[RMDB]
RNA sequence: GGGAACGACUCGAGUAGAGUCGAAAAAGCGAUGAUACGUCAUCGCAACGAUUGCCUGAUCGUAAAACAGGAGACGGCCGUGUCCGCGACCACGUAAAAAAGCGUAACGUGGUCUACGGACCACGAAAAAAGCGCGGAACGUUCGCGUUCCGCGCAAGUUCAUUUUUCGGUUCGCCGAAAAAUGAACAAAAGAAACAACAACAACAAC
Reactivity to 2A3 in 0.01 (KOAc 150mM, MgCl2 10mM, bicine 150mM(pH8.5), 24C), signal-to-noise 1, nucleotides 027 to 156: a010g000c000g000a000u000g010a000u000a040c200g060u050c020a000u000c000g000c010a000a020c000g010a010u030u030g030c010c020u010g020a000u000c050g130u150a030a030a040a010c010a010g030g020a010g100a060c040g100g040c050c000g040u010g000u000c000c000g000c000g000a000c000c020a000c010g000u030a000a060a060a140a100a010g150c160g100u070a070a000c000g000u000g000g000u000c000u010a020c010g010g000a010c020c070a010c020g130a150a040a010a010a010a010g000c010g000c000g020g010a020a000c000g010u050u060c120g030c000g060u000u040c040c040g230c000g000c000a000a000
The record gives the reactivity of an RNA of 207 nucleotides to 2A3. 2A3 adducts were read by reverse transcription with SuperScript II with manganese. The reactions ran in a buffer of 150 mM KOAc, 10 mM MgCl2 and 150 mM bicine (pH 8.5), at 24 C. As a SHAPE reagent, 2A3 marks flexible, mostly unpaired nucleotides at the ribose 2'-OH. For 2A3, 839 sequencing reads were counted.